[RMDB]
RNA sequence: GGGAACGACUCGAGUAGAGUCGAAAAGAAAGAAUCUGAACUGGUCGGUGAUUUAGGUAGUUUCCUGUUGUUGGGAUCCACCUUUCUCUCGACAGCACGACACUGCCUUCAUUACUUCAGUUGAAAAAUUACCUAGUUAGUUCGCUAACUAGGUAAUAAAAGAAACAACAACAACAAC
Reactivity to DMS in 0.01 (KOAc 150mM, MgCl2 10mM, bicine 150mM(pH8.5), 24C), signal-to-noise 9, nucleotides 027 to 126: g010a100a100a100g000a090a110u010c040u000g010a030a010c010u000g010g010u040c300g000g010u000g000a010u000u010u000a010g000g020u000a010g000u000u000u000c000c080u000g010u000u000g010u000u000g000g010g000a030u040c190c140a100c230c170u010u020u030c120u000c000u000c010g010a010c000a000g000c020a020c300g000a020c050a020c010u000g000c000c000u000u000c030a000u000u000a010c010u000u030c010a010g000u000u000g000a030a040a060a080
Reactivity to 2A3 in 0.01 (KOAc 150mM, MgCl2 10mM, bicine 150mM(pH8.5), 24C), signal-to-noise 9, nucleotides 027 to 126: g180a020a090a010g120a030a080u100c090u150g020a010a010c000u020g030g090u180c120g020g000u030g010a010u010u010u020a000g000g000u000a000g000u000u020u000c010c010u010g000u010u000g000u000u000g010g010g010a040u100c070c050a230c110c030u100u300u080c070u000c000u000c010g000a000c000a000g010c000a000c010g000a000c000a000c020u000g000c000c000u010u010c010a010u000u010a010c000u020u030c000a010g000u030u050g030a050a060a010a020
Chemical mapping of a 177-nucleotide RNA with DMS and 2A3. Values cover nucleotides 27 to 126.